About this RNA
This 177-nucleotide RNA was probed chemically with 2A3. It was measured as part of the RMDB library OK1LIB.
[RMDB]
RNA sequence: GGGAACGACUCGAGUAGAGUCGAAAACAUCUGUCAUCUUUCAACCCAAGCAAAAUUGGCCCCUGGCUUGGCUCCACACCCCCCACCCUCCGACCAGUUUAUGUCCUUGGGGUCACCUACUGGCCUGUCAGAGUGCGCAAUUCGUUGCGCACUCUGAAAAAGAAACAACAACAACAAC
Reactivity to 2A3 in 0.01 (KOAc 150mM, MgCl2 10mM, bicine 150mM(pH8.5), 24C), signal-to-noise 1, nucleotides 027 to 126: c010a040u050c020u080g050u090c040a080u150c030u020u140u130c010a070a080c080c000c000a000a000g040c030a000a000a000a260u030u120g110g000c050c000c010c010u020g080g000c040u000u020g040g000c030u030c010c020a010c000a020c000c020c000c000c000c000a080c000c000c000u010c010c000g060a080c010c070a030g000u000u150u040a190u080g050u020c060c000u020u040g000g000g000g030u030c000a010c000c000u030a010c010u010g070g000c000c000u070g050